Annotation: An RNA of 207 nucleotides, treated with 2A3 and DMS and read out base by base. For 2A3, 1,366 sequencing reads were counted. The reactions ran in a buffer of 150 mM KOAc, 10 mM MgCl2 and 150 mM bicine (pH 8.5), at 24 C. For DMS, 2,049 sequencing reads were counted.
RNA sequence: GGGAACGACUCGAGUAGAGUCGAAAAGGUGUACUCACUGUUCUUACUGUCAAAUGCACUGUAACAUCCAUGUUAAUUUGAUACAUGCUCUUGGAUUUGGAUUCUUGUUCAACUGUCUCCGUUCUUUAUAUAUAAUUUGCCACUGGUCCCAUCCUGAGGUAGUGGCUAAUUUCGAUUAGCCACUACCAAAAGAAACAACAACAACAAC
Reactivity to 2A3 in 0.01 (KOAc 150mM, MgCl2 10mM, bicine 150mM(pH8.5), 24C), signal-to-noise 3, nucleotides 027 to 156: g020g000u040g010u080a050c030u060c050a050c040u040g040u040u020c020u050u130a090c060u080g040u050c060a060a020a080u110g030c070a030c050u060g000u090a050a020c050a110u010c040c010a030u090g030u020u080a190a130u130u120u180g060a000u050a110c020a020u050g020c000u060c010u090u070g030g020a080u060u010u090g050g010a020u090u040c010u010u100g060u050u140c000a100a060c070u040g020u030c040u010c040c020g040u070u040c030u040u240u020a080u000a000u000a000u020a130a220u070u080u070g020c020c000a000c030u030g050g030u020c040c030c000a050u050c020c000u050g000a030
Reactivity to DMS in 0.01 (KOAc 150mM, MgCl2 10mM, bicine 150mM(pH8.5), 24C), signal-to-noise 1, nucleotides 027 to 156: g040g020u010g070u000a040c090u000c050a080c050u020g000u000u010c030u020u000a020c000u000g000u000c030a080a070a080u020g060c030a090c050u020g030u000a130a120c100a050u000c030c030a070u010g030u030u000a110a110u000u030u000g000a160u000a080c030a070u000g020c030u010c060u010u000g000g010a160u060u000u020g000g010a150u000u000c040u000u000g000u000u030c020a040a080c020u000g020u000c020u000c020c020g000u000u000c010u000u000u010a060u020a140u010a110u000a090a150u000u020u020g000c050c030a080c060u010g010g010u000c010c000c000a150u010c010c070u000g010a300